[RMDB]
RNA sequence: GGGAACGACUCGAGUAGAGUCGAAAAGGCGCGGACUGAAAGGCCGUAGAUGUCAGAAACAGGGCCAGGAUGAUGAUGUACAUGCCGAUGAUCCAUUUCCAGCGACUGUAAUUCAACCCCGCGAUAAUCCAGAGAUAGAGUUCGCUCUAUCUCUGGAAAAAGAAACAACAACAACAAC
Reactivity to DMS in 0.01 (KOAc 150mM, MgCl2 10mM, bicine 150mM(pH8.5), 24C), signal-to-noise 4, nucleotides 027 to 126: g000g010c020g040c040g020g000a140c070u020g000a120a110a110g010g020c000c040g010u010a060g000a100u000g010u000c120a090g010a140a100a070c080a050g000g000g000c040c030a120g010g010a050u020g010a070u020g000a070u020g010u040a070c080a040u030g010c040c040g010a150u010g000a070u000c020c040a080u000u010u030c020c020a100g000c070g000a040c020u010g020u020a050a100u010u010c120a050a100c070c030c010c020g010c090g030a110u030a090a120
Reactivity to 2A3 in 0.01 (KOAc 150mM, MgCl2 10mM, bicine 150mM(pH8.5), 24C), signal-to-noise 3, nucleotides 027 to 126: g020g000c010g000c000g000g020a120c020u100g020a070a050a060g040g000c000c010g010u000a070g010a130u120g020u040c050a020g090a020a150a040c050a060g090g000g000c020c000a030g020g050a080u100g030a010u050g090a070u100g080u180a010c040a060u190g150c040c030g040a070u100g010a010u000c000c020a000u050u050u000c010c010a030g000c000g070a120c120u050g020u060a080a090u040u050c030a140a160c020c000c000c000g050c000g010a030u060a130a060
The record gives the reactivity of an RNA of 177 nucleotides to DMS and 2A3. High 2A3 reactivity points to a flexible backbone, as in loops and unpaired stretches. The RNA was probed in 150 mM KOAc, 10 mM MgCl2 and 150 mM bicine (pH 8.5) at 24 C. High DMS reactivity at an A or C suggests that its Watson-Crick edge is free. For 2A3, 1,941 sequencing reads were counted.